Structure probing data (DMS and 2A3) for a 207-nucleotide construct.
For DMS, 3,764 sequencing reads were counted.
The reactions ran in a buffer of 150 mM KOAc, 10 mM MgCl2 and 150 mM bicine (pH 8.5), at 24 C.
For 2A3, 901 sequencing reads were counted.
For DMS the reverse transcriptase was MarathonRT.

[RMDB]
RNA sequence: GGGAACGACUCGAGUAGAGUCGAAAAGUCUAUUACGAAGUGUGGGAUAGGUUUGUGCAUACUUACUCUAGUCUCAUGCUCAGAACACUCUGCCUUAUGUUGUGCUGCGAGGUUGAUAGGAAUUAUAGUUCCCAUUUUACAGGUGAGGGUCCAAGAACCGCUCAGUAUUAUUCGUAAUACUGAGCGGAAAAGAAACAACAACAACAAC
Reactivity to DMS in 0.01 (KOAc 150mM, MgCl2 10mM, bicine 150mM(pH8.5), 24C), signal-to-noise 2, nucleotides 027 to 156: g030u010c060u000a060u010u000a150c070g000a060a080g030u000g020u010g030g000g020a090u000a010g030g010u000u000u010g030u010g030c160a160u000a040c030u000u000a040c030u000c020u010a050g030u010c000u000c020a040u010g010c000u010c030a150g020a060a060c060a040c000u010c020u000g020c030c020u010u000a120u020g040u000u020g030u000g010c020u010g020c030g000a090g060g010u010u000g000a090u000a050g010g000a060a080u000u000a120u000a170g020u000u010c010c010c010a300u000u000u000u000a120c080a100g000g000u010g000a110g030g000g030u000c030c010a010a020g000a150a240
Reactivity to 2A3 in 0.01 (KOAc 150mM, MgCl2 10mM, bicine 150mM(pH8.5), 24C), signal-to-noise 2, nucleotides 027 to 156: g030u000c010u050a130u060u100a100c100g110a100a050g000u000g020u000g030g000g000a000u010a020g050g030u010u010u010g000u070g080c100a040u140a270c000u000u000a000c000u010c010u180a140g160u150c010u000c000a010u020g010c000u000c020a070g030a020a010c090a030c030u070c080u060g020c000c000u120u040a180u180g110u140u030g030u080g020c010u010g000c020g010a020g010g010u050u020g090a070u040a080g000g070a060a030u210u040a110u090a150g060u000u010c000c020c000a000u080u110u070u030a080c040a010g000g060u050g020a100g040g020g000u000c070c010a060a010g110a070a050